Record summary:
An RNA of 177 nucleotides, treated with DMS and 2A3 and read out base by base. Conditions: 150 mM KOAc, 10 mM MgCl2 and 150 mM bicine (pH 8.5), 24 C. Reactivities are given for positions 27 through 126.
RNA sequence: GGGAACGACUCGAGUAGAGUCGAAAAGUAGAGCACUGAUAGGAGGAUCCGGGGGGUGACACCCUCGCCCUCCUGUCAAACUCCGAAUCCACCGCCGCCGUAGAUGGGCGGAGUCAGGGGCAGGGGGCAUUAUUACGGAUUUCGAUCCGUAAUAAUGAAAAGAAACAACAACAACAAC
Reactivity to DMS in 0.01 (KOAc 150mM, MgCl2 10mM, bicine 150mM(pH8.5), 24C), signal-to-noise 9, nucleotides 027 to 126: g010u020a090g010a040g010c080a110c180u010g010a010u000a010g000g000a010g000g000a040u010c300c020g010g000g010g000g000g010u000g020a200c160a190c000c000c000u000c000g000c300c000c000u000c000c000u000g010u000c010a010a100a220c010u000c010c020g000a140a130u010c020c010a090c080c060g000c020c010g000c020c020g010u010a100g020a110u030g010g000g000c020g000g000a040g010u010c110a100g010g000g000g020c120a090g010g000g000g000g010
Reactivity to 2A3 in 0.01 (KOAc 150mM, MgCl2 10mM, bicine 150mM(pH8.5), 24C), signal-to-noise 8, nucleotides 027 to 126: g140u160a020g010a010g010c060a030c130u010g000a010u010a010g000g000a000g000g000a010u050c050c010g000g010g000g000g000g010u050g020a020c020a070c030c000c000u000c000g000c000c000c000u000c000c000u000g000u000c000a000a000a010c000u000c000c000g030a030a070u030c010c010a040c020c040g020c010c000g020c010c010g070u090a060g050a280u180g080g020g000c020g000g000a010g050u050c060a030g000g010g010g000c030a050g030g010g000g000g010